RNA sequence: GGGAACGACUCGAGUAGAGUCGAAAACGGUGAAGCAGCUGUGCGGCAUCGCGGGCCUGACGGAACGCUAUUUCUACGAGUCCUUCCGCGAUCGCGAGGACUGCCUGGCCGCGCUGUACGGCGAACAGCGCGGUCAUGAGUUCGCUCAUGACCGCGCAAAAGAAACAACAACAACAAC
Reactivity to DMS in 0.01 (KOAc 150mM, MgCl2 10mM, bicine 150mM(pH8.5), 24C), signal-to-noise 7, nucleotides 027 to 126: c060g010g020u000g010a110a130g010c090a130g020c030u010g010u010g020c030g000g020c080a120u010c140g010c020g010g010g020c070c040u000g010a120c110g000g010a040a060c180g010c120u010a060u010u000u000c050u010a130c080g000a050g010u000c010c050u000u010c080c030g010c060g010a060u010c090g010c050g000a050g010g000a060c010u000g000c040c040u000g000g000c000c010g010c030g000c010u000g000u000a030c040g010g000c020g010a050a080c110a040
Reactivity to 2A3 in 0.01 (KOAc 150mM, MgCl2 10mM, bicine 150mM(pH8.5), 24C), signal-to-noise 5, nucleotides 027 to 126: c040g020g070u120g070a120a000g040c080a010g000c030u040g030u070g070c020g010g000c040a060u090c080g010c050g040g070g070c020c030u070g050a050c060g010g020a050a010c050g040c200u080a140u090u140u040c060u060a070c060g050a010g030u010c000c000u140u090c060c030g010c020g090a230u150c090g000c000g010a020g010g010a040c010u040g060c020c020u020g020g000c000c010g010c010g000c010u020g020u050a040c050g020g020c030g020a020a010c020a020